[RMDB]
The record gives the reactivity of an RNA of 207 nucleotides to 2A3. Conditions: 150 mM KOAc, 10 mM MgCl2 and 150 mM bicine (pH 8.5), 24 C.
RNA sequence: GGGAACGACUCGAGUAGAGUCGAAAAGUGGAAAGAAAUUAUGUUCAAGUAAGCAAAUAUGUCAUGGUUCUAGGAGUCUAUCUAUCGCGUAUAGACUUUAAGGGCGUGGUGGCCUAACCAUCGAGGUGAAGUCGGGACCUAAAAGAUCGAAUGGAACGCACUGAUGAGAGUUCGCUCUCAUCAGUGCAAAAGAAACAACAACAACAAC
Reactivity to 2A3 in 0.01 (KOAc 150mM, MgCl2 10mM, bicine 150mM(pH8.5), 24C), signal-to-noise 1, nucleotides 027 to 156: g090u100g050g030a010a020a020g090a070a170a030u170u070a100u060g060u000u070c060a050a020g020u120a090a040g110c030a050a140a090u180a130u260g050u080c040a050u080g090g060u030u070c030u070a070g100g060a000g000u030c050u030a000u000c000u050a050u170c170g000c000g020u210a000u000a030g000a000c000u000u100u050a090a080g010g000g000c020g000u000g010g000u020g030g000c000c040u020a030a030c050c000a010u040c080g000a050g000g050u060g030a050a140g010u010c050g020g000g070a030c000c020u110a080a080a000a030g040a060u100c050g050a000a070u020g040g090a000a080c050